[RMDB]
RNA sequence: GGGAACGACUCGAGUAGAGUCGAAAAGAUAUGGAUGUGUUGUCAGCUACCAUAGUAAAAAGGCUCGUCGGAAACGACGAGAACUACCUUUUUACUACAUUUAGCUUGGAUUUACACAUCCUAAGUCGAAUAAUGAAGGGUUCGCCCUUCAUUAUUCAAAAGAAACAACAACAACAAC
Reactivity to DMS in 0.01 (KOAc 150mM, MgCl2 10mM, bicine 150mM(pH8.5), 24C), signal-to-noise 5, nucleotides 027 to 126: g000a090u000a300u010g010g010a000u000g030u000g010u000u010g000u000c010a030g030c000u000a030c300c300a250u000a010g000u010a000a010a000a020a020g010g000c000u000c000g000u020c000g000g000a130a110a190c010g000a000c000g010a010g010a020a010c070u010a300c010c000u000u000u010u010u000a000c000u000a010c150a160u010u010u010a000g010c000u000u020g040g010a010u010u010u010a010c010a000c000a010u000c000c000u000a020a060g010u000c100
Reactivity to 2A3 in 0.01 (KOAc 150mM, MgCl2 10mM, bicine 150mM(pH8.5), 24C), signal-to-noise 3, nucleotides 027 to 126: g080a050u160a060u240g000g010a000u000g010u010g010u030u010g010u010c010a010g000c000u010a040c050c080a070u030a000g000u000a000a000a020a000a000g050g000c010u000c010g010u010c010g030g040a120a090a090c010g010a000c000g000a010g000a000a020c000u090a030c010c000u000u000u000u030u000a000c000u010a010c010a060u190u200u050a020g000c040u080u250g210g010a030u300u240u300a010c000a010c000a010u000c000c010u000a120a010g140u100c090